[RMDB]
RNA sequence: GGGAACGACUCGAGUAGAGUCGAAAAGAUAUGGAGUGACGGGAGACGUGAUGGGAUAGGCAAGAUGGUCGGAAACGACCAUCCCAUGCCUAUCCCAUUUAUCGUCUUUGAUCGUCACUCCUAAGUCGAUUACAAGGCACUUCGGUGCCUUGUAAUCAAAAGAAACAACAACAACAAC
Reactivity to DMS in 0.01 (KOAc 150mM, MgCl2 10mM, bicine 150mM(pH8.5), 24C), signal-to-noise 1, nucleotides 027 to 126: g000a080u020a300u000g010g000a010g020u000g000a000c000g000g010g000a010g020a000c000g000u000g000a000u000g010g020g000a000u000a000g010g050c030a100a240g000a000u000g000g000u000c010g000g000a090a110a300c020g000a010c000c000a000u010c020c040c210a080u000g000c000c000u000a010u000c000c010c000a000u000u000u010a050u020c040g010u000c000u000u000u030g000a160u010c020g000u000c000a000c000u000c000c000u010a000a040g000u000c030
This 177-nucleotide RNA was probed chemically with DMS. For DMS the reverse transcriptase was MarathonRT.